[RMDB]
RNA sequence: GGGAACGACUCGAGUAGAGUCGAAAAAUUUGACAGCAUUGGCAAAAGACGCAGCUAUGGGGCCUUUGCGAAGUUUAGGUGAGUCUUUGCUAUUCACGAAAAUGGAGUCGAUUAGGCCGAUUAAUUAUGAUGCAGCAUUAUUCGUAAUGCUGCAUCAAAAAGAAACAACAACAACAAC
Reactivity to DMS in 0.01 (KOAc 150mM, MgCl2 10mM, bicine 150mM(pH8.5), 24C), signal-to-noise 3, nucleotides 027 to 126: a060u000u010u000g010a080c110a120g000c050a060u000u000g000g000c020a050a050a050a090g000a120c100g010c030a070g010c040u000a050u000g010g010g020g030c010c030u000u010u000g020c080g000a170a110g010u000u010u000a070g010g000u000g000a040g010u000c030u010u010u010g010c150u000a060u000u000c060a010c050g020a090a060a040a040u000g010g020a220g020u000c070g020a100u000u010a050g010g030c000c000g010a110u000u010a060a080u000u000a100